[RMDB]
RNA sequence: GGGAACGACUCGAGUAGAGUCGAAAAACGAAAAGUACGCACUCGCAGCUUAAUAACCUGCGCUGAGCCCUUCUCCCCCAGCUUGCCUGUGUCCUAGGGAAUUGGAAGGUCAUCCUUCACAGGAUCGUCUAGGUAAUCCCUUUCGAGGGAUUACCAACAUACAAAUGCGAUUCGUCGCAUUUGUAUGAAAAGAAACAACAACAACAAC
Reactivity to 2A3 in 0.01 (KOAc 150mM, MgCl2 10mM, bicine 150mM(pH8.5), 24C), signal-to-noise 2, nucleotides 027 to 156: a010c070g040a060a050a010a000g040u100a040c030g000c030a050c040u000c000g000c000a000g000c010u060u050a050a010u060a080a050c010c000u010g030c020g000c170u070g020a020g030c030c010c030u050u060c110u090c020c060c000c000c000a030g030c030u030u160g020c000c000u020g000u010g010u060c030c010u030a020g000g030g080a070a080u110u100g070g050a050a040g040g020u120c020a030u070c020c010u040u040c050a020c000a040g020g010a050u100c070g050u030c100u080a050g000g000u000a000a000u020c000c000c000u020u030u050c130g080a010g000g010g000a000u000u000a000c000c000a010a000
Reactivity to DMS in 0.01 (KOAc 150mM, MgCl2 10mM, bicine 150mM(pH8.5), 24C), signal-to-noise 2, nucleotides 027 to 156: a120c040g000a060a060a040a030g010u000a040c090g000c030a100c040u000c010g020c020a010g020c020u010u020a120a090u000a100a130c200c010u000g000c020g000c290u000g000a060g020c010c040c030u010u010c060u000c010c030c000c000c010a080g000c050u000u000g020c040c030u000g020u000g020u010c040c030u000a100g020g040g010a070a130u000u010g040g010a100a080g010g050u000c060a120u000c030c020u000u000c070a120c090a060g000g020a080u000c050g010u010c040u010a090g020g030u000a020a020u000c000c000c000u000u000u010c210g030a050g040g020g000a010u000u000a000c000c010a030a040
This 207-nucleotide RNA was probed chemically with 2A3 and DMS.
Values are in units of 0.01, from 0 to 300, in steps of 10.
It was measured as part of the RMDB library M2RFPK.
For 2A3 the reverse transcriptase was SuperScript II with manganese.
The 2A3 profile rests on 2,309 reads.
The DMS profile rests on 6,842 reads.